[RMDB]
RNA sequence: GGGAACGACUCGAGUAGAGUCGAAAACGUCGUCCGGUCCAGCGAGGCGACCACCCGGCAGCUGCAGGCGGCGAUCUUUCACGCGCUCCUCAACGCCACCACUUACCGGGACCUCGAGGCGGACUGGCUCGGCCACGUGGCGGCCCGCGGUCUGCAGGAAUUAUACGUGGUUCGCCACGUAUAAUUCAAAAGAAACAACAACAACAAC
Reactivity to DMS in 0.01 (KOAc 150mM, MgCl2 10mM, bicine 150mM(pH8.5), 24C), signal-to-noise 2, nucleotides 027 to 156: c110g020u000c020g040u000c010c000g030g030u000c050c070a100g030c010g030a060g050g020c050g020a040c020c080a110c020c010c000g020g000c070a090g030c030u000g020c040a020g010g030c020g030g060c000g000a090u000c040u000u000u000c070a100c050g000c050g010c030u010c030c060u000c100a060a190c020g030c010c010a080c000c020a140c050u000u000a090c020c000g020g000g000a110c010c010u000c070g030a090g010g050c010g010g010a040c010u000g010g000c050u010c060g000g040c030c070a050c050g020u000g000g040c010g000g010c020c010c020g030c040g000g000u000c020u000g000c030a190g000
Reactivity to 2A3 in 0.01 (KOAc 150mM, MgCl2 10mM, bicine 150mM(pH8.5), 24C), signal-to-noise 3, nucleotides 027 to 156: c050g010u010c010g000u000c000c000g020g060u050c050c020a080g050c050g040a070g020g000c060g030a030c020c020a070c000c000c020g030g070c050a080g000c020u040g010c050a040g020g000c040g110g010c000g040a060u060c100u070u250u160c120a100c110g050c000g030c020u070c030c010u130c100a080a060c040g000c010c000a030c020c000a060c030u060u120a040c020c030g010g020g120a240c000c000u090c030g030a040g000g170c110g010g010a040c050u040g020g000c010u010c050g060g000c070c030a070c050g040u050g020g010c030g000g000c000c010c000g020c010g030g040u020c010u050g000c020a040g070
The record gives the reactivity of an RNA of 207 nucleotides to DMS and 2A3. The DMS profile rests on 4,101 reads. For 2A3, 2,467 sequencing reads were counted.